[RMDB]
RNA sequence: GGGAACGACUCGAGUAGAGUCGAAAAUUUGCGGGGUCAACCAGGUUUGGCGGGUUCACGCAACCAUUUGUACAGCGUCCAUCGCCCUGGAUAACCAAGGUCACGGACGGUCUUGGUCACCGAUUGACCUGAGUCUAGAAUUCGUUCUAGACUCAGGAAAAGAAACAACAACAACAAC
Reactivity to 2A3 in 0.01 (KOAc 150mM, MgCl2 10mM, bicine 150mM(pH8.5), 24C), signal-to-noise 5, nucleotides 027 to 126: u110u060u100g010c020g010g010g030g020u040c020a000a020c030c020a040g180g070u130u180u130g050g000c010g000g020g020u020u080c070a060c170g000c010a020a020c030c020a110u120u090u140g100u070a060c040a060g030c040g020u020c020c010a050u090c040g000c010c000c010u030g030g000a100u100a140a040c000c010a000a010g020g000u030c030a020c130g120g020a060c070g020g010u020c010u020u030g000g000u030c020a050c040c030g100a130u020u110g040a040
Reactivity to DMS in 0.01 (KOAc 150mM, MgCl2 10mM, bicine 150mM(pH8.5), 24C), signal-to-noise 6, nucleotides 027 to 126: u010u010u000g010c010g020g000g000g010u000c050a050a070c030c030a050g010g030u010u000u000g020g040c300g010g000g000u000u000c060a090c050g020c030a070a080c120c070a120u010u010u000g010u010a100c150a090g010c020g000u000c010c010a060u000c300g010c060c010c020u000g010g000a200u020a110a140c030c010a010a030g000g000u000c170a140c140g010g000a050c080g010g000u010c010u000u010g000g000u000c070a100c040c030g000a140u010u010g000a200